An RNA of 177 nucleotides, treated with DMS and 2A3 and read out base by base. Reactivities are rounded to 0.1 and cut off at 0 and 3. 2A3 adducts were read by reverse transcription with SuperScript II with manganese. It was measured as part of the RMDB library TTRDEL.
RNA sequence: GGGAACGACUCGAGUAGAGUCGAAAAGAUAUGGAACGGAUGGAGAGCAACAGCUCGGAAACGAGACAUGCUCGCAUCCCGUUCCUAAGUCAAAACGUGAUAGUUCUCUUCGGAGAACUAUCACGAAUCAGCAUUAAUCGUUCGCGAUUAAUGCUGAAAAAGAAACAACAACAACAAC
Reactivity to DMS in 0.01 (KOAc 150mM, MgCl2 10mM, bicine 150mM(pH8.5), 24C), signal-to-noise 3, nucleotides 027 to 126: g010a040u000a300u000g010g000a010a020c020g010g000a020u000g020g020a240g020a010g010c000a040a060c290a150g010c000u000c000g000g000a050a090a210c010g000a000g010a070c080a200u000g010c000u000c000g020c000a010u000c060c040c030g010u000u000c000c000u020a010a100g010u000c050a080a040a050a160c010g000u000g000a000u000a020g000u000u000c020u000c010u000u010c190g020g010a000g000a000a000c000u000a000u000c000a000c000g000a030a060
Reactivity to 2A3 in 0.01 (KOAc 150mM, MgCl2 10mM, bicine 150mM(pH8.5), 24C), signal-to-noise 2, nucleotides 027 to 126: g040a020u080a050u140g000g000a000a020c040g000g000a010u020g050g070a300g000a000g300c010a020a140c050a200g060c010u000c020g020g000a030a030a020c000g000a000g000a000c030a080u100g000c010u000c030g000c000a000u050c080c050c000g010u000u000c010c000u010a120a020g080u020c020a040a000a130a160c020g000u000g010a000u010a000g000u000u000c000u000c000u010u060c300g050g000a000g000a000a000c010u020a000u020c000a000c010g000a000a030